[RMDB]
RNA sequence: GGGAACGACUCGAGUAGAGUCGAAAACACACGCUAGGCAAUACGACCGCUCCAUAUCUGCCGAAUGAUGCCAAUGUAUGGUGCCUACUGUCCAACGUAACCGUUAAUCGCUGCCUUGGCGGCGAUUCAACUCAUAGGACUUCGGUCCUAUGAGUUGAAAAGAAACAACAACAACAAC
Reactivity to 2A3 in 0.01 (KOAc 150mM, MgCl2 10mM, bicine 150mM(pH8.5), 24C), signal-to-noise 3, nucleotides 027 to 126: c050a000c000a010c020g050c040u060a010g030g000c020a010a090u080a120c080g030a040c030c010g020c020u000c010c000a020u030a020u050c030u050g070c040c020g070a090a070u150g080a040u100g020c010c020a090a020u090g030u030a040u070g140g000u060g010c000c000u030a050c020u050g060u010c020c020a030a010c090g070u060a070a030c020c000g030u020u160a040a030u020c000g000c000u010g010c000c050u070u190g160g000c020g000g000c000g010a000u020u000
Reactivity to DMS in 0.01 (KOAc 150mM, MgCl2 10mM, bicine 150mM(pH8.5), 24C), signal-to-noise 2, nucleotides 027 to 126: c170a100c190a070c120g010c030u000a060g000g000c020a140a110u020a090c080g000a080c080c060g030c050u010c020c030a030u000a030u000c040u000g020c080c030g020a100a070u000g010a100u010g050c020c020a060a150u000g020u000a060u000g030g040u000g010c030c030u010a040c060u010g050u020c060c060a070a100c120g010u000a080a100c070c070g040u020u000a080a020u000c000g000c000u000g020c000c030u040u000g030g020c000g030g010c000g010a000u000u000